Conditions: 150 mM KOAc, 10 mM MgCl2 and 150 mM bicine (pH 8.5), 24 C.
An RNA of 207 nucleotides, treated with 2A3 and read out base by base.
The 2A3 profile rests on 365 reads.
2A3 adducts were read by reverse transcription with SuperScript II with manganese.
RNA sequence: GGGAACGACUCGAGUAGAGUCGAAAAGACUCAAGGGAUACUAGAACUUUUGCAAAUUUUAUUCGUUAAAAUAUAACAGAUGAAAAUUAACAUGUUGCACAGAAUUGUGGAACAUUUAUGUAACUCUCAAACAUAAGGAGUAAAAUUCUGAGGAGGAAUAGAGUCUAGUGUUCGCACUAGACUCUAUAAAAGAAACAACAACAACAAC
Reactivity to 2A3 in 0.01 (KOAc 150mM, MgCl2 10mM, bicine 150mM(pH8.5), 24C), signal-to-noise 1, nucleotides 027 to 156: g040a000c020u000c190a110a040g000g050g060a020u080a080c090u150a090g090a260a190c040u100u080u180u080g000c030a070a000a190u010u100u020u160a110u020u060c000g000u020u090a210a000a300a050u130a060u070a060a020c020a000g130a040u050g080a050a070a070a000u040u090a000a070c000a060u060g020u030u070g000c020a020c020a060g300a300a280u300u100g000u000g000g090a000a000c000a000u030u000u220a040u020g020u060a070a040c000u000c060u040c130a080a020a120c000a000u130a020a110g000g000a040g000u010a020a020a020a020u000u050c060u090g090a060g020g000a060g000g000a020